[RMDB]
RNA sequence: GGGAACGACUCGAGUAGAGUCGAAAAUAAAAUAAAAGAGGCCACAGCAGUAGCGUUCACGUCGCCGCCUCUGUAAGAUUGUGGUCAAUCUGUGAAUACUGCUAAAAAGAUCGAAAGAUCAAAAAAAGUAUAACUAUAACUUCGGUUAUAGUUAUACAAAAGAAACAACAACAACAAC
Reactivity to DMS in 0.01 (KOAc 150mM, MgCl2 10mM, bicine 150mM(pH8.5), 24C), signal-to-noise 1, nucleotides 027 to 126: u000a070a110a050a100u000a060a050a160a100g000a000g020g010c000c160a050c230a110g020c000a020g040u010a000g040c000g050u000u000c270a090c120g000u000c000g020c010c080g010c020c040u000c000u000g000u010a210a010g010a020u000u000g020u000g010g010u000c010a000a010u010c000u000g000u000g000a020a080u000a000c010u000g010c000u000a040a060a100a110a140g000a010u010c000g000a120a040a150g000a010u000c020a000a000a090a090a090a030a200
Source: RMDB library M2PK90, as collected in RNAgym.
Structure probing data (DMS) for a 177-nucleotide construct.